[RMDB]
RNA sequence: GGGAACGACUCGAGUAGAGUCGAAAAGAUAUGGAUCCCAGCAAGGGAUGGUAUCGGAAACGAUACCCUCUCCUGAUGACCUGGGAGUCCUAAGUCAAACUUAACCAAUCUUCGGAUUGGUUAAGAAGUAUAUAGAUAGCUUCGGCUAUCUAUAUACAAAAGAAACAACAACAACAAC
Reactivity to 2A3 in 0.01 (KOAc 150mM, MgCl2 10mM, bicine 150mM(pH8.5), 24C), signal-to-noise 6, nucleotides 027 to 126: g000a000u020a010u080g000g000a000u000c020c010c000a010g000c010a020a150g020g000g000a010u090g000g000u000a000u010c010g000g010a030a020a000c000g000a000u000a010c010c000c000u030c020u030c000c000u280g110a300u050g020a040c000c010u000g010g040g030a030g290u150c000c010u010a030a010g010u010c040a070a090a140c020u000u000a000a010c000c000a000a010u000c010u030u090c280g090g000a010u000u000g000g000u000u000a000a000g000a000a010
Reactivity to DMS in 0.01 (KOAc 150mM, MgCl2 10mM, bicine 150mM(pH8.5), 24C), signal-to-noise 9, nucleotides 027 to 126: g000a030u000a130u010g000g000a300u000c010c000c000a010g010c020a060a040g010g010g010a010u010g000g010u000a000u000c000g020g010a050a020a070c010g010a010u000a000c000c010c300u000c130u000c000c020u000g010a080u010g010a120c300c000u000g000g010g000a030g010u000c000c000u010a030a070g000u000c020a130a070a230c000u000u000a000a000c000c000a010a000u000c000u000u010c240g020g010a000u000u000g000g000u000u000a000a000g000a050a070

The data come from the RNA Mapping Database (RMDB), library TTRDEL. Chemical mapping of a 177-nucleotide RNA with 2A3 and DMS. The 2A3 profile rests on 22,094 reads. The DMS profile rests on 12,820 reads. 2A3 adducts were read by reverse transcription with SuperScript II with manganese. The RNA was probed in 150 mM KOAc, 10 mM MgCl2 and 150 mM bicine (pH 8.5) at 24 C.